[RMDB]
RNA sequence: GGGAACGACUCGAGUAGAGUCGAAAAUGGCACCAUCUCAGCUCACUGCAGCCUUGACCUCCCUGGGCUCCGGUGAUUUCACCCUCCCAAGUAGCUAGGACUACAGGCACAUGCCACGACACCCAGCGUCAACGAUUCGAUUCGUCGAAUCGUUGACAAAAGAAACAACAACAACAAC
Reactivity to 2A3 in 0.01 (KOAc 150mM, MgCl2 10mM, bicine 150mM(pH8.5), 24C), signal-to-noise 3, nucleotides 027 to 126: u150g080g000c040a010c050c010a110u050c040u030c040a030g000c010u010c020a050c030u010g030c000a040g010c000c000u040u040g040a080c000c000u050c010c010c020u060g030g020g030c020u040c040c040g000g010u030g050a070u010u120u130c010a050c010c000c030u030c010c000c000a010a040g020u000a000g020c060u020a040g020g140a120c040u060a020c070a030g030g000c010a060c000a070u140g000c010c000a030c000g020a000c020a040c020c000c030a040g070c020
Reactivity to DMS in 0.01 (KOAc 150mM, MgCl2 10mM, bicine 150mM(pH8.5), 24C), signal-to-noise 1, nucleotides 027 to 126: u000g020g000c230a080c190c020a000u000c190u000c020a010g000c300u000c000a160c000u000g000c270a010g050c290c020u000u000g000a000c080c140u000c060c000c000u000g060g030g020c000u000c090c000g170g010u000g000a020u000u000u000c120a000c010c000c060u000c000c000c050a200a070g020u000a010g050c000u010a200g000g000a220c000u010a050c000a290g000g000c150a010c080a160u000g000c050c000a070c200g000a100c000a030c010c000c010a050g050c030